[RMDB]
Chemical mapping of a 177-nucleotide RNA with 2A3 and DMS.
RNA sequence: GGGAACGACUCGAGUAGAGUCGAAAAUCUUACAUACGGUCUAAAGCGGCUGUACCUUCUGCUCCUCCUUUGGCAGAUAUUCACAAUCGAAACCAACAUGAGAUCCAACAUGAGAUGGAAGUGGGCCAAUACGUGACCAGUUCGCUGGUCACGUAUUAAAAGAAACAACAACAACAAC
Reactivity to 2A3 in 0.01 (KOAc 150mM, MgCl2 10mM, bicine 150mM(pH8.5), 24C), signal-to-noise 1, nucleotides 027 to 126: u110c000u030u050a060c020a150u160a000c010g000g020u010c050u150a250a210a000g120c070g040g000c020u030g080u090a050c010c000u050u060c040u020g030c040u000c000c000u040c000c000u000u100u010g000g000c050a030g040a020u000a080u050u190c070a040c000a130a090u020c010g050a140a000a040c010c000a010a010c010a090u030g010a040g010a120u100c070c040a110a070c010a110u130g080a150g000a080u050g040g010a070a050g040u090g010g060g000c000c000
Reactivity to DMS in 0.01 (KOAc 150mM, MgCl2 10mM, bicine 150mM(pH8.5), 24C), signal-to-noise 2, nucleotides 027 to 126: u000c020u000u000a110c140a130u020a070c080g030g010u000c040u010a020a110a150g020c200g030g020c040u010g030u020a100c050c060u000u000c030u000g000c060u000c060c020u010c030c040u000u000u010g010g030c060a100g010a070u000a090u000u000c190a080c130a080a010u000c020g000a090a110a110c030c020a030a090c130a070u010g020a110g010a150u000c060c060a070a070c090a030u010g000a110g010a070u000g000g000a070a080g020u000g000g010g050c040c200
Record summary
For 2A3 the reverse transcriptase was SuperScript II with manganese. The data come from the RNA Mapping Database (RMDB), library OK2TRN.